RNA sequence: GGGAACGACUCGAGUAGAGUCGAAAAGAUAUGGAGCCCAUGUGAGCGUAUCGCUAUUCGGAAACGAAUAGCGAAGCUCCAUGUGGCUCCUAAGUCAAAUGUGCCUACUAGUUCGCUAGUAGGCACAGUUCAAUCUGCUCUUCGGAGCAGAUUGAACAAAAGAAACAACAACAACAAC
Reactivity to 2A3 in 0.01 (KOAc 150mM, MgCl2 10mM, bicine 150mM(pH8.5), 24C), signal-to-noise 1, nucleotides 027 to 126: g010a000u030a030u170g000g010a010g020c000c000c000a020u030g300u290g020a020g020c130g060u300a170u270c010g000c000u000a000u000u010c020g050g080a020a140a110c010g000a010a000u000a000g000c000g000a000a000g000c000u010c000c000a000u010g010u090g010g000c000u000c020c000u020a000a000g020u020c010a000a070a200u120g000u000g060c000c030u010a000c000u010a010g090u070u110c300g020c300u010a020g000u040a000g060g000c020a010c000a010
Reactivity to DMS in 0.01 (KOAc 150mM, MgCl2 10mM, bicine 150mM(pH8.5), 24C), signal-to-noise 1, nucleotides 027 to 126: g020a100u000a300u010g010g010a030g020c000c010c010a000u000g000u020g010a040g020c020g000u010a140u000c000g010c000u000a000u010u000c000g000g030a190a100a230c000g010a000a000u010a040g030c000g030a010a040g020c000u000c000c000a000u000g000u010g040g000c000u000c000c000u010a000a070g010u000c050a080a110a200u010g020u000g010c010c000u000a010c000u000a000g000u000u000c300g020c000u000a000g020u000a020g010g040c000a000c000a000